[RMDB]
RNA sequence: GGGAACGACUCGAGUAGAGUCGAAAACAAUCGGUGCGCGCAUGAUCACCACAUGCGGGUCCGAUGAUAAGUGCCGUGCCUCGGAGGCACUUGGCGCUAUCGCUUCGAUCAAUUAUCGCACCACGGACGACGUAAAUACCUUCGGGUAUUUACGUCGAAAAGAAACAACAACAACAAC
Reactivity to 2A3 in 0.01 (KOAc 150mM, MgCl2 10mM, bicine 150mM(pH8.5), 24C), signal-to-noise 3, nucleotides 027 to 126: c030a020a050u150c120g000g000u030g030c060g000c000g000c000a000u000g010a110u180c060a030c140c040a030c000a010u010g000c000g040g010g020u030c080c100g030a020u020g000a010u030a190a040g000u000g000c000c000g000u010g000c010c000u190c140g300g050a170g080g000c000a010c000u010u090g000g000c000g010c000u000a020u010c030g000c100u090u070c020g020a010u010c010a090a170u190u100a140u240c000g000c000a010c000c030a020c040g070g030a010
Reactivity to DMS in 0.01 (KOAc 150mM, MgCl2 10mM, bicine 150mM(pH8.5), 24C), signal-to-noise 3, nucleotides 027 to 126: c100a110a070u010c140g010g000u020g020c000g010c020g030c000a020u000g010a080u000c240a130c240c270a130c010a000u000g020c000g000g010g020u020c010c030g030a010u020g000a010u000a070a020g030u000g010c000c010g000u010g010c040c000u010c300g010g010a220g010g020c000a010c010u000u010g010g000c000g020c020u000a010u000c010g010c300u000u010c130g020a010u000c040a060a190u000u000a100u000c050g020c010a010c000c010a120c180g000g000a280
An RNA of 177 nucleotides, treated with 2A3 and DMS and read out base by base. Conditions: 150 mM KOAc, 10 mM MgCl2 and 150 mM bicine (pH 8.5), 24 C.